Conditions: 150 mM KOAc, 10 mM MgCl2 and 150 mM bicine (pH 8.5), 24 C. This 177-nucleotide RNA was probed chemically with 2A3 and DMS. For 2A3 the reverse transcriptase was SuperScript II with manganese. The DMS profile rests on 6,065 reads.
RNA sequence: GGGAACGACUCGAGUAGAGUCGAAAAAUGAUUCGUAUAUGGUUAUCAUGCAAAAUAUUGCUAUUCCACAUGCAUACUCUGAAAAGCAUGUACAUAAAACAGCGAUGAGUAUGUUGAUAUUACAAGACCUAUCCGUAGGUUUCGACCUACGGAUAGGAAAAGAAACAACAACAACAAC
Reactivity to 2A3 in 0.01 (KOAc 150mM, MgCl2 10mM, bicine 150mM(pH8.5), 24C), signal-to-noise 8, nucleotides 027 to 126: a000u090g010a040u080u070c050g050u130a130u070a080u300g080g040u100u080a030u080c020a010u100g010c040a020a020a180a140u280a270u140u060g010c020u060a120u110u010c020c010a060c020a100u120g000c000a000u000a020c010u010c010u070g030a150a170a010a040g030c060a170u050g020u050a010c050a110u290a070a090a030a000c000a010g010c000g080a090u050g000a040g010u000a010u000g000u010u040g030a040u060a070u170u140a090c100a120a030g080a070
Reactivity to DMS in 0.01 (KOAc 150mM, MgCl2 10mM, bicine 150mM(pH8.5), 24C), signal-to-noise 4, nucleotides 027 to 126: a060u000g010a060u010u020c040g030u020a070u010a090u030g010g000u010u000a020u010c050a050u000g000c060a070a070a090a100u020a070u020u000g020c010u010a140u020u020c020c030a120c070a030u010g000c000a000u010a020c030u020c050u010g010a080a070a130a130g000c010a060u010g000u000a040c230a150u020a020a090a080a040c080a030g020c030g000a060u030g010a070g020u000a010u000g020u000u000g020a070u030a040u010u010a050c200a100a110g000a220
Overview:
The 2A3 profile rests on 6,885 reads.